[RMDB]
RNA sequence: GGGAACGACUCGAGUAGAGUCGAAAAACUCAGCAAGAUCAUCAGGGGCCGACAGCAAAAACCUCCAAGCAUCUGCGGUCGAUGAUUCCAUGACUGACCAGGAAGUGCGAGAGGCUCUCGGAGCAUGAACAUGAAAGUGUUUCGACACUUUCAUGUUAAAAGAAACAACAACAACAAC
Reactivity to DMS in 0.01 (KOAc 150mM, MgCl2 10mM, bicine 150mM(pH8.5), 24C), signal-to-noise 5, nucleotides 027 to 126: a090c090u000c020a100g030c080a100a100g010a070u000c020a050u010c050a200g030g000g000g020c060c050g010a060c120a060g010c110a030a070a050a110a100c070c020u010c050c050a080a230g000c050a070u000c030u000g010c060g000g020u000c010g020a070u010g000a130u010u000c090c050a060u000g010a070c050u000g000a060c090c020a230g010g010a050a100g000u000g000c060g010a080g000a070g020g010c050u000c040u000c060g000g010a100g010c090a060u000g010
Reactivity to 2A3 in 0.01 (KOAc 150mM, MgCl2 10mM, bicine 150mM(pH8.5), 24C), signal-to-noise 3, nucleotides 027 to 126: a000c020u000c000a010g000c010a020a090g000a130u050c010a020u010c020a030g160g000g140g100c040c030g090a180c030a000g030c030a050a070a060a150a220c020c020u040c070c010a070a020g030c010a060u120c000u060g010c020g010g000u010c030g030a060u070g000a020u160u050c060c010a010u080g080a120c040u050g000a040c030c020a010g000g060a100a030g050u030g060c020g030a050g000a020g040g050c000u000c000u010c030g050g000a030g010c040a050u110g070
An RNA of 177 nucleotides, treated with DMS and 2A3 and read out base by base. The data come from the RNA Mapping Database (RMDB), library OK2TST. Reactivities are given for positions 27 through 126. For DMS the reverse transcriptase was MarathonRT. The RNA was probed in 150 mM KOAc, 10 mM MgCl2 and 150 mM bicine (pH 8.5) at 24 C. 2A3 adducts were read by reverse transcription with SuperScript II with manganese.